[RMDB]
RNA sequence: GGGAACGACUCGAGUAGAGUCGAAAAAUGCAGAUUCAACUUAAGGCUGUCAUCUUGCUCUGCACACCAUUCAGAUAGCUGCAUUGCUGCGCGGAUCUCCGGGAUCUUAUUGCGCCCGCAUUGCUCACACAUAAUUGAUCUUCGGAUCAAUUAUGUGAAAAGAAACAACAACAACAAC
Reactivity to DMS in 0.01 (KOAc 150mM, MgCl2 10mM, bicine 150mM(pH8.5), 24C), signal-to-noise 9, nucleotides 027 to 126: a090u000g010c030a030g000a080u000u010c060a070a070c120u000u010a080a130g010g000c040u010g010u010c050a060u000c080u000u010g010c300u000c020u000g010c030a050c090a120c040c030a130u010u000c150a090g010a070u000a050g010c040u000g000c020a030u000u000g020c030u000g010c020g040c040g010g000a030u000c020u010c200c180g000g010g000a030u010c020u010u010a140u010u010g010c050g010c010c100c160g000c050a040u000u000g010c020u010c120a240
Reactivity to 2A3 in 0.01 (KOAc 150mM, MgCl2 10mM, bicine 150mM(pH8.5), 24C), signal-to-noise 9, nucleotides 027 to 126: a000u060g000c010a000g040a080u070u190c060a080a070c110u150u160a100a030g080g000c030u020g060u100c020a070u030c050u050u060g020c020u010c020u070g010c020a020c010a030c050c010a050u130u120c030a030g050a150u090a080g050c050u030g000c030a010u000u040g000c020u020g000c020g000c020g020g010a020u010c020u050c090c080g160g180g010a020u010c020u070u160a200u180u210g000c010g020c030c040c040g000c010a020u010u070g000c010u040c030a060